Record summary: The record gives the reactivity of an RNA of 207 nucleotides to 2A3. The 2A3 profile rests on 624 reads. It was measured as part of the RMDB library OK3TST.

RNA sequence: GGGAACGACUCGAGUAGAGUCGAAAAGGUGUGUGGGCACAUGUCUGUGGUCCCAGCUACUUAGGAGGAUGAGAUGGGAGGAUCAUUUGAGCCUGGAAAGUCGAGGCUGCAGUGAGCUGUAACUGCACCACUGCAUUCCAGCCUGGGUGACAGAGCACUGCUACCAGGUAUUCGUACCUGGUAGCAGAAAAGAAACAACAACAACAAC
Reactivity to 2A3 in 0.01 (KOAc 150mM, MgCl2 10mM, bicine 150mM(pH8.5), 24C), signal-to-noise 2, nucleotides 027 to 156: g000g000u010g020u050g000u030g060g000g000c120a010c020a090u250g090u030c030u040g090u110g000g070u120c000c000c000a000g020c020u120a100c050u040u100a010g040g040a000g020g000a030u180g010a050g020a160u060g000g040g000a020g000g030a030u180c050a040u140u010u190g060a040g080c050c000u000g010g070a170a040a010g050u060c050g030a030g020g050c040u020g000c000a000g000u000g000a050g040c120u030g030u080a090a150c110u160g000c000a040c110c000a000c000u020g020c010a040u000u120c080c030a040g010c000c020u080g000g130g070u100g010a080c010a000g030a020g090c090a010